[RMDB]
RNA sequence: GGGAACGACUCGAGUAGAGUCGAAAACUGCCAAUGACAUUAAUUCAGCCCAAUCUUCAGCUCCAACUUCUAAUGCUGACGCCGAAACUGCUUCAUCUCCAGUUUCUGAACAAAGUUUAGCCACUGGUAAUAUCAGGCGCUUCGGCGCCUGAUAUUAAAAAGAAACAACAACAACAAC
Reactivity to 2A3 in 0.01 (KOAc 150mM, MgCl2 10mM, bicine 150mM(pH8.5), 24C), signal-to-noise 1, nucleotides 027 to 126: c050u060g020c020c000a020a050u080g100a110c080a060u100u230a300a110u120u070c000a020g000c010c010c010a000a090u000c030u020u000c030a010g000c000u100c020c030a120a140c060u100u120c000u150a220a100u180g010c000u030g040a020c050g030c050c000g000a000a000a000c040u110g000c060u060u090c060a090u050c020u010c000c000a000g000u000u050u000c000u010g020a000a030c090a190a110a000g030u090u040u040a010g020c000c000a000c000u000g000g000